[RMDB]
RNA sequence: GGGAACGACUCGAGUAGAGUCGAAAACAGCUUCUUACAACUGAAACCACCAUUGCUGACUUUGGAAUAGGAAGCUCCAAGAUUUUAGUUCCUAUCAAUGCACAGUCCAUUGGAACCACAUACACUAACCCAGCGCAGCAUUCGUGCUGCGCUGGGUAAAAGAAACAACAACAACAAC
Reactivity to 2A3 in 0.01 (KOAc 150mM, MgCl2 10mM, bicine 150mM(pH8.5), 24C), signal-to-noise 1, nucleotides 027 to 126: c130a090g110c000u000u000c010u100u170a100c030a060a090c110u200g010a030a020a020c000c000a000c000c000a090u010u290g070c000u030g090a060c000u060u110u000g000g030a060a040u060a060g090g030a000a090g060c000u000c000c000a100a230g190a170u000u120u180u240a060g030u060u000c060c060u030a040u160c060a100a000u090g000c060a000c000a120g030u000c000c000a000u010u000g000g060a050a100c120c080a000c000a180u190a030c030a040c060u000a060